Chemical mapping of a 177-nucleotide RNA with DMS and 2A3. The RNA was probed in 150 mM KOAc, 10 mM MgCl2 and 150 mM bicine (pH 8.5) at 24 C. For 2A3, 3,833 sequencing reads were counted. For 2A3 the reverse transcriptase was SuperScript II with manganese. For DMS the reverse transcriptase was MarathonRT.

[RMDB]
RNA sequence: GGGAACGACUCGAGUAGAGUCGAAAAGAUAUGGAGAAUCCUCCUGAUCCGAAGAACUCGGAAACGAGGGAGGAUCGGAGGAGUUCUCCUAAGUCAAAACAUAUCCAAUCUUCGGAUUGGAUAUGAAUCUAAGAUUAUCCUUCGGGAUAAUCUUAGAAAAAGAAACAACAACAACAAC
Reactivity to DMS in 0.01 (KOAc 150mM, MgCl2 10mM, bicine 150mM(pH8.5), 24C), signal-to-noise 4, nucleotides 027 to 126: g010a040u000a300u020g000g000a010g000a040a100u000c000c000u000c010c000u010g030a010u000c000c010g000a120a180g000a110a250c000u000c000g010g010a130a080a190c020g020a020g010g000g000a100g020g010a010u000c000g000g000a020g000g000a010g000u000u000c000u000c000c000u000a010a060g000u010c030a080a080a110a190c010a010u000a010u010c000c000a010a000u000c000u010u010c210g040g000a010u000u000g010g000a000u010a000u000g000a070a090
Reactivity to 2A3 in 0.01 (KOAc 150mM, MgCl2 10mM, bicine 150mM(pH8.5), 24C), signal-to-noise 2, nucleotides 027 to 126: g000a010u110a050u170g000g000a030g010a010a010u000c010c020u010c050c080u200g010a020u000c000c020g110a200a030g020a030a030c010u020c020g020g040a080a050a040c000g010a010g000g010g020a010g010g010a000u000c070g000g000a000g000g000a010g010u020u000c000u000c000c000u000a050a020g020u000c020a000a030a060a220c000a000u000a000u000c000c000a010a010u000c010u070u090c300g150g000a010u000u000g000g000a000u000a010u000g000a010a030
Annotation: The DMS profile rests on 3,684 reads.